[RMDB]
About this RNA
The record gives the reactivity of an RNA of 177 nucleotides to DMS and 2A3. DMS adducts were read by reverse transcription with MarathonRT. For 2A3, 1,515 sequencing reads were counted. Values are in units of 0.01, from 0 to 300, in steps of 10. The reactions ran in a buffer of 150 mM KOAc, 10 mM MgCl2 and 150 mM bicine (pH 8.5), at 24 C.
RNA sequence: GGGAACGACUCGAGUAGAGUCGAAAAGCAGAGUGCGGCUCAACUUAAAGAAAGACAAACAGCGCGGCCGGCCCGUGGUCAUCUCUGCCGGCAACAUAAGUAUGCGGAAAGAGAAGCGCAAACAACAUCGCUAAUACGAUUUCGAUCGUAUUAGCGAAAAAGAAACAACAACAACAAC
Reactivity to DMS in 0.01 (KOAc 150mM, MgCl2 10mM, bicine 150mM(pH8.5), 24C), signal-to-noise 2, nucleotides 027 to 126: g000c040a050g000a120g030u000g050c020g000g000c040u010c060a080a070c120u000u000a060a070a160g000a040a080a100g030a090c050a030a030a090c130a110g020c070g010c050g000g000c010c020g000g000c010c030c020g030u000g000g000u010c080a040u010c030u000c000u000g020c260c020g010g000c030a000a060c120a070u000a090a070g030u000a090u010g000c030g010g020a010a110a040g010a040g020a100a300g010c020g000c060a060a040a030c130a040a100c060a130
Reactivity to 2A3 in 0.01 (KOAc 150mM, MgCl2 10mM, bicine 150mM(pH8.5), 24C), signal-to-noise 1, nucleotides 027 to 126: g030c020a030g030a020g060u030g020c050g030g000c030u000c040a050a060c010u050u130a100a070a050g130a060a070a010g100a080c030a010a190a000c010a100g050c010g010c050g040g000c030c020g020g020c000c000c000g080u060g030g020u030c020a060u050c010u010c030u010g000c000c010g070g030c000a020a020c020a040u170a180a030g070u050a080u150g010c020g060g010a050a160a020g040a010g010a080a040g000c000g000c000a000a100a000c050a000a000c010a070